[RMDB]
RNA sequence: GGGAACGACUCGAGUAGAGUCGAAAAAGGAGUGGCCACCACCUGGGGCUGCAAAACAGGCUGCGGCAACAUUGGCGGCGGAACAGCAACGGAGCAGUCAAUGUCCAGGUCGCUAAGCAGAUCCACACUAGGGAGCUGGGUUCGCCCAGCUCCCUAGAAAAGAAACAACAACAACAAC
Reactivity to 2A3 in 0.01 (KOAc 150mM, MgCl2 10mM, bicine 150mM(pH8.5), 24C), signal-to-noise 1, nucleotides 027 to 126: a000g070g110a170g010u100g000g010c030c000a140c070c000a050c010c020u150g000g000g060g000c030u030g000c010a000a000a300a000c030a030g190g000c140u010g030c060g010g050c020a000a000c000a030u000u070g000g020c030g000g070c050g100g010a140a080c060a110g220c020a040a040c250g070g000a090g030c020a010g020u030c000a000a050u030g000u020c060c000a020g050g000u000c000g000c070u090a060a000g000c060a070g000a050u000c020c000a020c060a030
The data come from the RNA Mapping Database (RMDB), library OK1LIB. Chemical mapping of a 177-nucleotide RNA with 2A3. For 2A3 the reverse transcriptase was SuperScript II with manganese.